[RMDB]
RNA sequence: GGGAACGACUCGAGUAGAGUCGAAAAGUUCAUGCCUAACUUCGCUCUGGAGUGGCUGAUCAACGCCUACCACAGGCGCGGCGCCGACAUCGAAGGCAUCGACCUACACAAAAUGCGCCGCUUGAUCGUGUUAACAGGACUUCGGUCCUGUUAACACAAAAGAAACAACAACAACAAC
Reactivity to DMS in 0.01 (KOAc 150mM, MgCl2 10mM, bicine 150mM(pH8.5), 24C), signal-to-noise 2, nucleotides 027 to 126: g000u000u050c090a010u100g080c000c010u000a090a050c040u020u020c020g010c250u020c080u130g000g000a040g060u030g000g010c120u000g000a080u000c010a150a060c130g000c010c000u000a170c010c000a080c100a110g000g000c000g000c000g000g030c020g060c030c140g040a100c300a030u000c160g000a130a090g020g000c020a080u010c260g000a050c030c000u000a050c300a300c070a070a030a080a140u000g030c020g100c000c000g000c000u030u010g000a040u070c020
Reactivity to 2A3 in 0.01 (KOAc 150mM, MgCl2 10mM, bicine 150mM(pH8.5), 24C), signal-to-noise 5, nucleotides 027 to 126: g020u010u020c020a050u250g020c000c000u070a080a070c010u040u000c030g150c180u130c160u300g020g010a010g010u060g030g000c010u020g000a020u040c040a010a070c040g020c000c000u050a120c050c110a080c030a090g000g030c000g000c000g050g000c020g000c000c020g110a100c010a100u180c090g100a080a020g000g000c010a090u070c020g240a300c000c020u130a070c050a010c020a080a070a000a050u120g000c000g000c000c000g010c020u030u130g060a050u110c140